[RMDB]
RNA sequence: GGGAACGACUCGAGUAGAGUCGAAAAGACGGUUCUUCGGAACCGUCAAGAAGAUCUACGGAUCUUCAAGUGCUGUCGUGAGACAGCACACGUGGAAUCGUGAGAUUCCACGAAAACGAAAAAAACUACAUAAAACGGUGACAUCUUCGGAUGUCACAAGCCUAACUUCGGUUAGGCAAGCGCCACGUGAGUGGCGCAAACUGUGAUUAUAAAAGUGGAGUACUAAAGUACCCACUACCUUUAAUCACAGACAAUAAAGGUCCAUAACGCACGGAUUCGUCCGUGCGAAAAGAAACAACAACAACAAC
Reactivity to 2A3 in 0.01 (KOAc 150mM, MgCl2 10mM, bicine 150mM(pH8.5), 24C), signal-to-noise 2, nucleotides 027 to 266: g000a000c010g000g030u030u040c030u070u070c240g050g000a000a000c020c010g000u010c000a000a010g000a000a000g000a000u050c000u030a030c300g070g000a010u010c030u010u000c070a070a060g010u000g000c010u010g000u010c010g110u050g060a100g000a020c030a000g000c010a000c000a000c010g010u000g010g010a010a000u000c040g010u150g110a060g000a020u000u000c000c010a000c010g000a010a000a000a010c040g060a060a000a000a000a060a030a030c130u300a070c130a180u300a110a180a030a020c140g120g010u010g000a010c000a000u010c010u050u100c240g070g010a000u000g010u090c040a000c000a020a000g000c000c000u040a010a000c000u040u040c070g050g000u000u010a010g000g020c010a000a040g000c010g040c020c000a030c010g250u250g250a230g030u000g000g000c000g000c020a000a010a010c000u000g000u000g000a000u000u010a020u010a030a000a000a000g010u050g020g030a240g090u010a040c030u180a150a150a080g010u010a000c040c010c010a000c030u000a000c000c000u000u000u000a000a000u000c020a000c000a000g120a000c040a010a060u180a150a210a010g090g000u110c050c110a060u300a100a020